Conditions: 150 mM KOAc, 10 mM MgCl2 and 150 mM bicine (pH 8.5), 24 C. Structure probing data (2A3 and DMS) for a 177-nucleotide construct. For DMS the reverse transcriptase was MarathonRT. It was measured as part of the RMDB libraries RFM100 and RFMREP.
[RMDB]
RNA sequence: GGGAACGACUCGAGUAGAGUCGAAAAUAACUGAAAUGCUUUAUGAGAGGAGUUUUCUUCCGCAAUGACUAAUAAAAAAGUAGUUCGCGUUGUCGUUAUCUUAAUGCUAAUCGCGAUUGUAUUAUCCAUGUUAAAGUUAAUUCGUUAACUUUAACAUAAAAGAAACAACAACAACAAC
Reactivity to 2A3 in 0.01 (KOAc 150mM, MgCl2 10mM, bicine 150mM(pH8.5), 24C), signal-to-noise 5, nucleotides 027 to 126: u070a020a020c080u050g110a100a080a090u120g030c000u050u110u100a030u100g070a050g000a010g080g010a020g020u040u020u100u020c030u130u050c070c020g040c070a070a110u170g040a040c030u050a040a120u180a170a120a050a030a010a050g060u100a020g030u050u050c050g000c020g000u000u090g010u050c000g000u020u030a090u090c050u020u130a060a030u110g020c050u080a100a070u130c030g010c010g070a050u060u120g060u060a080u130u060a030u030c020c040
Reactivity to DMS in 0.01 (KOAc 150mM, MgCl2 10mM, bicine 150mM(pH8.5), 24C), signal-to-noise 9, nucleotides 027 to 126: u030a100a140c140u010g010a090a110a100u010g000c030u000u010u010a030u010g000a300g000a050g000g010a130g010u010u010u010u010c020u000u000c030c030g020c130a060a060u010g010a060c050u010a050a070u040a010a060a060a080a080a070g010u000a060g010u000u000c030g010c170g010u010u010g010u000c030g010u000u000a050u010c100u000u000a040a040u000g010c060u000a050a050u010c070g010c130g010a060u000u010g000u010a040u010u010a060u010c100c130